[RMDB]
RNA sequence: GGGAACGACUCGAGUAGAGUCGAAAAGUAAGCAUGGCGUCCGCCGUAGGUGUUGUGCACCUCGGCAAUGACAUGGCGCAGUUGGCCGUCGCGGUCGUGGCACCAGAAGAUGCUCAACGGGUUGAAGUGUACCGUGAUGUUUCGACAUCACGGUACAAAAAGAAACAACAACAACAAC
Reactivity to 2A3 in 0.01 (KOAc 150mM, MgCl2 10mM, bicine 150mM(pH8.5), 24C), signal-to-noise 2, nucleotides 027 to 126: g120u140a090a000g030c100a060u130g010g130c070g050u020c030c140g010c000c000g080u160a000g000g020u090g080u180u290g080u300g130c020a000c000c000u000c000g030g000c060a000a100u170g000a020c020a040u080g000g000c000g000c030a010g040u010u070g040g000c030c010g040u180c130g000c050g000g020u020c010g080u090g030g030c010a030c010c010a030g020a100a010g060a040u130g010c000u010c040a020a030c080g000g140g030u050u030g070a160a000g060
Reactivity to DMS in 0.01 (KOAc 150mM, MgCl2 10mM, bicine 150mM(pH8.5), 24C), signal-to-noise 2, nucleotides 027 to 126: g010u020a160a080g000c030a000u040g010g000c070g040u000c040c200g000c000c000g000u050a020g030g000u000g040u000u080g050u070g030c010a000c010c020u010c010g000g000c020a100a050u010g020a030c030a030u010g010g010c090g030c040a090g000u000u030g010g000c000c020g000u010c020g030c090g000g020u020c020g040u010g010g020c010a030c010c020a080g000a170a090g000a070u020g000c020u000c040a050a090c040g000g000g010u030u000g000a120a180g050

The record gives the reactivity of an RNA of 177 nucleotides to 2A3 and DMS.
It was measured as part of the RMDB library OK1LIB.
Values cover nucleotides 27 to 126.
DMS adducts were read by reverse transcription with MarathonRT.